[RMDB]
RNA sequence: GGGAACGACUCGAGUAGAGUCGAAAAGUGGGACGAUAACUCCAAUCCUUUGACUAAUAUUUUGGAACUCUUUCGUCUGCUGUCCAUUAGUCAACCUCGGACCAGCAUCUCAACUGGGUGCGCUCGGCAGGUACCUGAGAUUCGUCUCAGGUACCUGAAAAGAAACAACAACAACAAC
Reactivity to DMS in 0.01 (KOAc 150mM, MgCl2 10mM, bicine 150mM(pH8.5), 24C), signal-to-noise 3, nucleotides 027 to 126: g050u020g010g000g030a020c050g010a050u000a060a230c150u010c000c030a030a070u020c070c090u010u000u010g020a110c130u010a060a060u000a110u000u000u000u000g020g010a090a060c070u000c150u000u020u000c050g010u000c020u000g000c010u000g010u000c020c030a100u000u000a050g000u010c050a070a080c130c030u010c070g020g010a060c070c050a060g020c040a060u000c020u000c140a080a110c120u000g000g000g000u000g000c060g010c080u000c070g010g010
Reactivity to 2A3 in 0.01 (KOAc 150mM, MgCl2 10mM, bicine 150mM(pH8.5), 24C), signal-to-noise 2, nucleotides 027 to 126: g060u090g060g000g000a010c030g040a020u040a110a010c020u040c040c000a020a100u100c010c030u100u070u080g090a060c050u070a060a130u060a220u180u110u080u060g030g020a050a040c010u020c080u090u190u040c030g080u040c060u020g010c030u040g040u040c030c000a050u040u150a040g060u040c020a040a080c000c010u020c040g000g050a030c030c000a030g020c010a060u030c040u030c080a130a270c110u090g050g000g000u030g040c040g010c030u050c020g070g000
Source: RMDB library OK2TRN, as collected in RNAgym.
This 177-nucleotide RNA was probed chemically with DMS and 2A3.
2A3 adducts were read by reverse transcription with SuperScript II with manganese.
Conditions: 150 mM KOAc, 10 mM MgCl2 and 150 mM bicine (pH 8.5), 24 C.